[RMDB]
Notes: Chemical mapping of a 207-nucleotide RNA with 2A3 and DMS. The 2A3 profile rests on 661 reads. Values cover nucleotides 27 to 156. The reactions ran in a buffer of 150 mM KOAc, 10 mM MgCl2 and 150 mM bicine (pH 8.5), at 24 C. The DMS profile rests on 3,239 reads. For DMS the reverse transcriptase was MarathonRT. For 2A3 the reverse transcriptase was SuperScript II with manganese.

RNA sequence: GGGAACGACUCGAGUAGAGUCGAAAAGGGUCGUUGGACUUUACACCCGUUCACCAUUAGUGAGUUAAUUUUCGCGGAUACAACUGAUCCAAGCUAACAGUCUGUAGCCAUCAAGCUCUUGAAAAAGACGAGUAUUUCGGUCUUCUUUCGUGCGCCGUACUCACACGAAUUUCGAUUCGUGUGAGUAAAAAGAAACAACAACAACAAC
Reactivity to 2A3 in 0.01 (KOAc 150mM, MgCl2 10mM, bicine 150mM(pH8.5), 24C), signal-to-noise 2, nucleotides 027 to 156: g020g010g000u060c100g060u190u140g060g050a090c030u100u090u080a050c070a060c030c000c000g030u150u070c090a180c120c010a060u040u080a050g080u060g110a050g040u040u130a140a180u160u040u110u160c180g050c040g030g030a000u010a030c000a010a010c000u010g030a080u030c050c040a050a060g020c060u180a160a110c000a080g000u000c090u060g030u060a000g000c040c050a010u010c020a030a000g020c030u000c010u090u140g020a070a060a060a000a000g040a000c080g000a020g050u150a150u130u140u080c040g050g060u010c000u050u030c030u010u040u080c060g030u050g020c060g000c010c020g070
Reactivity to DMS in 0.01 (KOAc 150mM, MgCl2 10mM, bicine 150mM(pH8.5), 24C), signal-to-noise 2, nucleotides 027 to 156: g000g040g010u000c020g020u020u000g010g010a100c080u000u010u020a080c030a090c000c010c020g000u000u000c020a080c020c050a140u010u000a140g020u000g020a080g050u000u010a090a080u000u010u000u010c030g010c170g010g000a080u020a040c060a080a110c030u000g000a090u000c080c050a150a080g040c090u010a050a170c020a020g020u010c040u000g020u000a030g020c020c020a110u000c030a070a100g000c030u000c020u010u010g000a000a010a040a060a090g020a050c070g010a040g020u000a130u000u010u000c020g030g020u030c060u000u000c100u000u000u000c080g050u000g000c010g050c020c050g000